[RMDB]
RNA sequence: GGGAACGACUCGAGUAGAGUCGAAAAGAUAUGGAGUGAGUCGAGCUUCUGUCAGUUGUGUCGGAAACGACGAAUGACUGAAGCUAAGACAGCUCACUCCUAAGUCAAAGUCUAGUUCGCUAGACAACACUGAUCUCUACUUCGGUAGAGAUCAGUGAAAAGAAACAACAACAACAAC
Reactivity to DMS in 0.01 (KOAc 150mM, MgCl2 10mM, bicine 150mM(pH8.5), 24C), signal-to-noise 2, nucleotides 027 to 126: g000a020u000a220u010g000g000a040g030u000g000a000g030u000c020g010a040g010c000u000u000c000u020g020u010c000a020g010u000u000g010u000g030u000c020g000g010a040a070a130c010g030a000c000g000a100a060u000g010a040c010u000g010a040a000g000c020u000a120a080g000a030c300a080g000c010u000c010a000c000u000c000c010u000a020a020g000u000c010a080a030a200g030u000c000u000a000g000u010u010c300g040c000u000a000g000a010c010a090a210
Reactivity to 2A3 in 0.01 (KOAc 150mM, MgCl2 10mM, bicine 150mM(pH8.5), 24C), signal-to-noise 2, nucleotides 027 to 126: g030a010u030a020u110g000g000a010g000u000g000a000g030u090c010g020a020g010c010u030u020c010u090g020u000c010a060g040u260u300g300u160g030u160c010g000g030a060a030a050c020g010a000c040g040a070a060u020g000a000c000u020g010a020a000g000c000u040a120a020g040a020c020a010g010c000u020c000a010c000u020c000c000u000a070a000g010u010c080a160a030a030g000u000c010u000a010g020u070u080c300g020c110u000a000g000a010c010a030a030